[RMDB]
RNA sequence: GGGAACGACUCGAGUAGAGUCGAAAAAAUUCAAGAUCGCGUAAUUGCAAAAUCAGUUGAUUCUGUAAUUGAGAAUGCGCGAUUCAAUGCGUUGAUUAACUCAGAGCAUAACGAAUACGUCAAAGUUUUAGAGCAACUGCGUGAAGUGCUGCGAGUGGAAAUGGAGUGCAUUCGUGCACUCCAUUUCAAAAGAAACAACAACAACAAC
Reactivity to 2A3 in 0.01 (KOAc 150mM, MgCl2 10mM, bicine 150mM(pH8.5), 24C), signal-to-noise 1, nucleotides 027 to 156: a000a000u260u100c080a150a000g080a090u030c000g000c040g000u040a010a170u030u010g010c000a000a000a000a100u100c030a040g260u220u190g130a110u220u020c000u030g080u110a050a080u030u030g090a070g070a100a060u080g040c000g000c000g030a000u000u080c040a000a100u120g030c040g000u000u020g040a040u140u100a060a000c000u020c010a010g000a040g050c030a010u060a130a020c120g160a080a120u110a130c000g030u020c100a060a060a060g000u020u070u070u160a120g010a010g040c010a020a000c000u020g030c070g000u010g060a010a070g010u000g010c000u030g040c000g020a010g090u060g030

Structure probing data (2A3) for a 207-nucleotide construct. The data come from the RNA Mapping Database (RMDB), library OK3TST. The reactions ran in a buffer of 150 mM KOAc, 10 mM MgCl2 and 150 mM bicine (pH 8.5), at 24 C. The 2A3 profile rests on 348 reads.